[RMDB]
RNA sequence: GGGAACGACUCGAGUAGAGUCGAAAAAGCGUAGCGGUACGCCGCUACGCAAGGCGCAUUUGAACUGUAUUGUACGCCUUGCAUAAAGCAAAAGUACUAAAAAAACGUGACGUUACGACGGCACGAAAAAACAUCCAUUGGUUCGCCAAUGGAUGAACAUACACUUACUGUUCGCAGUAAGUGUAUGAAAAGAAACAACAACAACAAC
Reactivity to DMS in 0.01 (KOAc 150mM, MgCl2 10mM, bicine 150mM(pH8.5), 24C), signal-to-noise 3, nucleotides 027 to 156: a120g010c020g010u000a000g020c020g010g000u000a080c210g050c030c020g020c010u000a010c010g000c010a020a000g010g010c010g000c000a040u000u000u000g010a080a170c080u000g010u000a300u000u010g020u000a020c010g000c000c000u000u000g000c010a100u000a050a120a110g030c070a050a070a110a100g010u000a190c070u020a000a000a030a090a030a050a110c010g030u000g000a010c000g010u000u000a110c210g010a090c000g000g010c000a020c000g040a010a020a050a090a050a070c000a000u000c000c000a040u000u000g010g020u000u030c300g030c000c000a000a010u000g000g010a000u000g000a020a120
Reactivity to 2A3 in 0.01 (KOAc 150mM, MgCl2 10mM, bicine 150mM(pH8.5), 24C), signal-to-noise 4, nucleotides 027 to 156: a000g020c000g000u000a000g000c000g000g010u040a040c240g050c020c000g010c000u000a000c000g000c000a000a000g000g000c020g010c030a090u070u090u270g150a180a130c110u110g050u220a110u150u100g020u050a030c010g000c000c000u000u020g010c030a060u110a230a150a040g010c020a020a020a020a030g050u060a060c140u230a030a030a040a010a020a020a040c010g000u010g010a000c000g010u010u060a060c290g020a010c010g070g000c010a000c000g140a120a000a000a000a000a000c000a000u000c000c000a000u000u000g010g010u040u050c160g010c100c000a000a000u000g000g000a000u000g000a000a000